RNA sequence: GGGAACGACUCGAGUAGAGUCGAAAAGAUAUGGAUCAUAUAGCUUUUGACGGAGUGCAAUGGUAUAAAUGUAUCGGAAACGAUACAUUUAUACCAUUGCCUCCGAUAAGCUAAUUGAUCCUAAGUCCCGCUAUUUAUUCUUCGGAAUAAAUAGCGGAAAAGAAACAACAACAACAAC
Reactivity to DMS in 0.01 (KOAc 150mM, MgCl2 10mM, bicine 150mM(pH8.5), 24C), signal-to-noise 1, nucleotides 027 to 126: g000a100u010a300u020g030g010a010u000c010a060u000a300u010a000g040c000u000u010u010u020g020a220c110g000g000a020g000u020g000c000a010a010u000g000g020u020a010u000a000a010a010u000g020u000a000u000c010g000g000a110a130a200c010g010a010u010a000c020a000u000u000u040a000u000a000c000c000a010u010u000g010c000c000u000c010c000g010a020u000a020a000g000c000u010a010a300u020u000g000a010u000c000c010u010a060a170g020u000c020